Chemical mapping of a 177-nucleotide RNA with 2A3.
RNA sequence: GGGAACGACUCGAGUAGAGUCGAAAACAUUUGCGUCGGUGUCCGAUGUCGUUCGAACGCUUGACCGCGGCUAUGUCAAGGCGGUAAGACGCCGGUGGCUUCGUGAGGAGCAUUACCGCCGAAUGUAUGCGUUAUCGGACUUCGGUCCGAUAACGCAAAAAGAAACAACAACAACAAC
Reactivity to 2A3 in 0.01 (KOAc 150mM, MgCl2 10mM, bicine 150mM(pH8.5), 24C), signal-to-noise 1, nucleotides 027 to 126: c000a040u000u010u100g050c020g000u000c000g000g030u040g000u000c080c000g040a050u160g200u300c080g000u060u110c020g040a030a030c000g000c000u090u140g020a000c000c130g000c000g030g060c000u070a040u210g190u150c130a080a000g000g000c000g020g020u040a000a000g060a130c060g000c110c000g180g080u140g010g010c000u030u000c000g110u120g190a150g000g000a000g020c100a100u040u060a010c010c020g000c000c000g040a040a000u080g080u090a070
For 2A3 the reverse transcriptase was SuperScript II with manganese.